[RMDB]
RNA sequence: GGGAACGACUCGAGUAGAGUCGAAAACUCCACGCUGGGUAAUGGACGACGGCGGCGUGUGGCGGACAGGGAUACCGGUAGUCAGUGUCUGGAACAUCCCAAGGGGCGGCGGAGCUAGCACCCCGACAAAACGGGCACAAGUUCGCUUGUGCCCGAACUACAGAGCAAUGUUCGCAUUGCUCUGUAGAAAAGAAACAACAACAACAAC
Reactivity to 2A3 in 0.01 (KOAc 150mM, MgCl2 10mM, bicine 150mM(pH8.5), 24C), signal-to-noise 1, nucleotides 027 to 156: c000u030c000c000a010c040g000c020u020g070g000g020u070a090a070u130g020g050a030c050g020a050c010g060g020c010g020g010c020g000u060g010u030g020g030c050g000g000a070c050a030g030g000g020a020u050a150c030c070g000g010u050a030g070u060c020a020g050u010g060u100c050u050g020g010a030a070c010a080u010c000c060c000a040a040g000g010g000g010c050g020g020c070g070g000a040g070c030u010a020g000c000a060c000c020c000c000g010a030c080a020a110a010a000c020g010g020g000c000a000c000a000a000g030u070u130c170g020c130u000u010g000u030g000c000c000c000g000a000a000